[RMDB]
RNA sequence: GGGAACGACUCGAGUAGAGUCGAAAAACAUCUCACUGGGAAGUGAGAUGUGAGUCCGCAUGGGAAUGCGGACGGUCGAUUUGACAAGGAUCCUAAUUGUCAAGAGGAGAACGAGAUGUACGGGAGUAGAUCGAGUUCUGCUCGCAGAAUAGGCAGCGUGUACUCCUGUAUUCGUACAGGAGUGCACAAAAGAAACAACAACAACAAC
Reactivity to DMS in 0.01 (KOAc 150mM, MgCl2 10mM, bicine 150mM(pH8.5), 24C), signal-to-noise 2, nucleotides 027 to 156: a000c000a000u000c000u000c010a020c010u010g030g050g010a300a020g040u010g010a030g010a000u000g010u000g020a170g010u000c000c010g000c010a030u000g030g010g010a300a070u000g010c000g050g010a000c010g020g040u000c000g000a140u010u000u000g010a170c030a080a120g010g000a140u000c010c030u000a090a110u010u000g030u010c040a040a080g000a050g020g000a030g000a030a050c030g000a300g020a030u010g000u000a060c020g020g010g000a270g000u000a030g000a010u000c010g000a300g010u000u000c000u000g040c000u000c000g030c060a070g000a090a140u000a040g010g020c020a100g020c130
Reactivity to 2A3 in 0.01 (KOAc 150mM, MgCl2 10mM, bicine 150mM(pH8.5), 24C), signal-to-noise 2, nucleotides 027 to 156: a000c000a000u000c000u000c000a000c010u040g030g070g080a110a010g010u000g000a000g000a000u010g000u010g000a000g010u000c000c000g000c000a020u000g070g020g100a170a000u050g000c010g000g000a010c000g000g040u050c020g060a120u020u030u100g000a000c000a010a010g000g000a040u010c000c000u050a050a070u060u030g020u020c050a020a010g000a010g020g030a010g000a000a000c000g000a000g000a030u020g030u100a010c030g050g050g020a090g010u020a020g000a040u000c000g010a000g010u000u000c000u010g050c000u020c020g000c020a040g030a070a050u080a050g020g030c030a020g010c030
The record gives the reactivity of an RNA of 207 nucleotides to DMS and 2A3. Reactivities are rounded to 0.1 and cut off at 0 and 3. For DMS the reverse transcriptase was MarathonRT. The RNA was probed in 150 mM KOAc, 10 mM MgCl2 and 150 mM bicine (pH 8.5) at 24 C.